[RMDB]
RNA sequence: GGGAACGACUCGAGUAGAGUCGAAAACUAGCGUCCGCUUAUACGCGCGCUCACGGAUGCAGAUGCUCGAACAACAGCGCGCGGGCAUGCAGUCGCAGCGCCAAUACACGCGGCCGUCGUGACUAGAGGAUGCGGCUUGAUUCGUCGGGCUGUAUCCAAAAGAAACAACAACAACAAC
Reactivity to 2A3 in 0.01 (KOAc 150mM, MgCl2 10mM, bicine 150mM(pH8.5), 24C), signal-to-noise 9, nucleotides 027 to 126: c010u010a020g010c000g000u000c000c000g000c020u060u080a040u020a050c040g040c000g000c000g000c010u010c010a040c020g050g010a070u040g000c010a010g040a230u140g020c000u010c020g050a090a020c020a030a020c020a070g040c010g000c010g000c000g020g000g000c000a010u010g000c000a020g080u070c040g000c010a000g000c000g000c010c000a030a020u050a030c060a000c040g000c000g000g000c000c000g030u030c030g010u010g020a030c010u010a000g000a010
Reactivity to DMS in 0.01 (KOAc 150mM, MgCl2 10mM, bicine 150mM(pH8.5), 24C), signal-to-noise 9, nucleotides 027 to 126: c030u000a100g010c010g000u000c010c000g010c050u000u000a080u000a120c060g010c080g010c010g000c010u000c140a080c120g000g000a040u000g010c010a090g000a110u000g010c020u000c030g000a080a090c100a090a230c180a050g010c050g010c090g010c000g000g000g010c010a050u000g000c010a070g000u000c050g010c230a030g000c050g010c010c030a070a060u010a070c100a080c160g000c010g000g000c020c020g010u000c070g010u000g000a170c040u000a010g000a300
The record gives the reactivity of an RNA of 177 nucleotides to 2A3 and DMS. The RNA was probed in 150 mM KOAc, 10 mM MgCl2 and 150 mM bicine (pH 8.5) at 24 C.